RNA sequence: GGGAACGACUCGAGUAGAGUCGAAAAAGGAAUCUGGUGCUAUUGAUAAUUUUAGGGGUACAUUAGAAGGCGAGUUAGGUAAAAAUUGUGAUUUGACUUGUAAUGCUGCUGCCGUUAAACUUGACACCGUCAUUAUUUCAUUCGUGAAAUAAUGACGAAAAGAAACAACAACAACAAC
Reactivity to 2A3 in 0.01 (KOAc 150mM, MgCl2 10mM, bicine 150mM(pH8.5), 24C), signal-to-noise 9, nucleotides 027 to 126: a000g120g010a060a030u050c060u090g020g000u030g040c040u080a060u140u120g110a080u120a220a170u090u100u100u160a050g010g000g000g010u030a010c010a030u010u040a040g050a150a010g060g000c010g000a020g010u040u060a060g050g140u160a020a070a030a090a130u170u170g060u040g050a060u030u030u060g030a020c010u030u030g080u100a030a040u040g010c030u010g000c010u040g070c010c010g010u030u070a060a090a040c030u020u040g020a020c010a010c100
Reactivity to DMS in 0.01 (KOAc 150mM, MgCl2 10mM, bicine 150mM(pH8.5), 24C), signal-to-noise 7, nucleotides 027 to 126: a070g030g010a090a070u010c050u010g000g030u020g010c040u000a040u010u020g010a100u030a060a070u020u010u010u020a100g000g010g000g010u010a030c050a060u010u010a060g010a060a100g000g020c020g000a030g010u000u000a050g000g020u010a030a060a070a080a070u030u030g010u010g000a050u000u000u010g010a030c030u010u010g010u000a040a050u010g010c080u010g000c020u000g010c020c030g000u010u010a020a040a070c080u010u010g010a110c160a080c180